[RMDB]
RNA sequence: GGGAACGACUCGAGUAGAGUCGAAAAUAUUCUUGUUCACAACCAAACUCUACUUGUCCUUCUGAGUGUGAUUACGCCCAUGGAGUAGCUCAGGAGGCAAACAGGGUUACCCUGUGGAUAGGUCACACCAGAUUAUUAUCUUCGGAUAAUAAUCUGGAAAAGAAACAACAACAACAAC
Reactivity to 2A3 in 0.01 (KOAc 150mM, MgCl2 10mM, bicine 150mM(pH8.5), 24C), signal-to-noise 4, nucleotides 027 to 126: u180a070u060u050c000u010u030g010u010u020c010a010c000a060a040c040c050a110a020a020c000u020c010u020a080c060u050u030g120u260c010c010u010u000c000u000g000a000g010u070g010u110g090a180u100u160a050c060g050c010c030c030a070u250g080g020a060g020u050a010g000c000u000c010a010g000g000a000g010g000c010a000a010a000c060a010g000g010g000u000u020a040c020c020c030u020g010u020g000g000a010u010a030g020g020u060c040a040c010a030
Reactivity to DMS in 0.01 (KOAc 150mM, MgCl2 10mM, bicine 150mM(pH8.5), 24C), signal-to-noise 4, nucleotides 027 to 126: u010a100u000u010c010u010u000g030u000u000c020a010c020a070a110c140c120a110a100a030c000u000c000u000a130c060u000u000g020u020c000c010u010u000c010u010g000a030g000u010g020u010g020a180u020u000a020c080g010c030c030c200a140u010g010g010a090g000u000a080g000c000u000c000a020g020g000a000g000g010c020a000a010a080c060a010g030g000g010u000u000a090c200c140c070u010g020u000g000g000a020u010a020g010g010u010c170a080c240a150

This 177-nucleotide RNA was probed chemically with 2A3 and DMS. 2A3 adducts were read by reverse transcription with SuperScript II with manganese. High 2A3 reactivity points to a flexible backbone, as in loops and unpaired stretches. For DMS the reverse transcriptase was MarathonRT. Source: RMDB library RFMREP, as collected in RNAgym. The RNA was probed in 150 mM KOAc, 10 mM MgCl2 and 150 mM bicine (pH 8.5) at 24 C. Reactivities are given for positions 27 through 126.